[RMDB]
RNA sequence: GGGAACGACUCGAGUAGAGUCGAAAAAGUUCGCGCUUCCGUGAAACGCGAAAAUCGGACGGUGGCUGCAAGUCGCAUCGCGAAACCGCGGCAAGUGGAGUUAGCGAGAGGAGGCUGGGUUUUGGCUAGAACACACGGUACUUCGGUACCGUGUGAACUAAACUCUUCGAUUCGUCGAAGAGUUUAGAAAAGAAACAACAACAACAAC
Reactivity to DMS in 0.01 (KOAc 150mM, MgCl2 10mM, bicine 150mM(pH8.5), 24C), signal-to-noise 2, nucleotides 027 to 156: a120g020u000u000c020g040c010g030c020u000u000c020c210g000u000g030a070a030a060c020g000c010g000a030a000a100a060u000c050g040g010a100c030g000g010u000g020g010c020u030g040c050a090a060g040u010c050g000c020a120u000c050g000c020g000a110a080a090c030c020g030c030g020g030c090a070a140g020u010g010g010a110g020u000u000a170g020c030g020a080g000a090g010g000a060g010g000c030u000g000g010g020u000u000u000u000g000g030c080u000a090g010a090a170c010a010c010a010c010g000g020u000a030c000u000u000c290g070g030u000a000c000c000g000u000g000u010g010a030a110
Reactivity to 2A3 in 0.01 (KOAc 150mM, MgCl2 10mM, bicine 150mM(pH8.5), 24C), signal-to-noise 3, nucleotides 027 to 156: a010g060u020u060c000g010c010g000c050u130u010c050c020g060u050g080a140a070a020c020g000c000g040a060a010a000a060u080c020g020g030a020c040g050g040u060g030g020c050u130g020c080a060a090g050u030c010g000c060a060u040c050g000c000g040a070a010a020c020c030g020c000g040g050c120a160a040g020u070g060g020a050g010u060u080a020g000c010g010a030g000a040g050g020a030g040g000c050u030g020g000g000u040u120u100u090g020g000c010u020a050g060a190a020c010a010c000a000c000g000g000u000a000c000u010u050c220g050g010u000a000c000c000g000u000g000u000g000a000a000